[RMDB]
Overview:
Structure probing data (DMS and 2A3) for a 207-nucleotide construct. The data come from the RNA Mapping Database (RMDB), library M2RFPK.

RNA sequence: GGGAACGACUCGAGUAGAGUCGAAAAGAACUUUGGCCCGCUCGGAAUAGAAUCAGGGGGUGCAAACUGCCCACUGGCAGAAAGGAUUAUAGCAAAUGCGUACCCUAUUGCAAUACAGCCCGGCCAACAUAGACUACUCUAUUCGUAGAGUAGUCAACUCUAUAUUACCGUUCGCGGUAAUAUAGAGAAAAGAAACAACAACAACAAC
Reactivity to DMS in 0.01 (KOAc 150mM, MgCl2 10mM, bicine 150mM(pH8.5), 24C), signal-to-noise 1, nucleotides 027 to 156: g020a140a080c070u010u000u010g030g030c000c020c070g010c040u000c090g000g000a190a110u010a030g030a170a060u010c050a060g010g000g010g050g090u030g020c050a020a030a200c050u000g040c010c000c090a130c160u010g060g090c050a080g000a210a100a080g010g010a180u020u000a080u010a150g000c060a050a040a100u010g020c090g030u010a100c000c000c000u000a110u000u010g020c000a080a090u020a080c080a090g000c000c020c050g040g000c020c000a050a070c080a160u000a160g030a030c010u000a020c010u020c000u010a020u000u000c220g000u010a010g020a050g030u000a000g020u000c000a030a050
Reactivity to 2A3 in 0.01 (KOAc 150mM, MgCl2 10mM, bicine 150mM(pH8.5), 24C), signal-to-noise 4, nucleotides 027 to 156: g040a040a020c010u080u020u030g000g000c010c020c000g000c050u030c100g020g050a110a090u130a160g070a050a070u130c060a100g000g020g000g010g000u050g030c010a040a080a080c020u050g000c010c020c060a140c180u160g010g000c020a030g090a080a070a020g100g020a070u180u120a130u240a140g070c040a040a110a090u100g000c030g040u090a100c000c000c000u010a080u000u080g030c020a050a060u060a130c020a040g030c030c040c010g000g000c020c010a000a000c020a050u160a030g000a000c020u000a010c000u000c000u000a060u040u040c100g050u050a000g000a000g010u000a000g000u000c000a000a000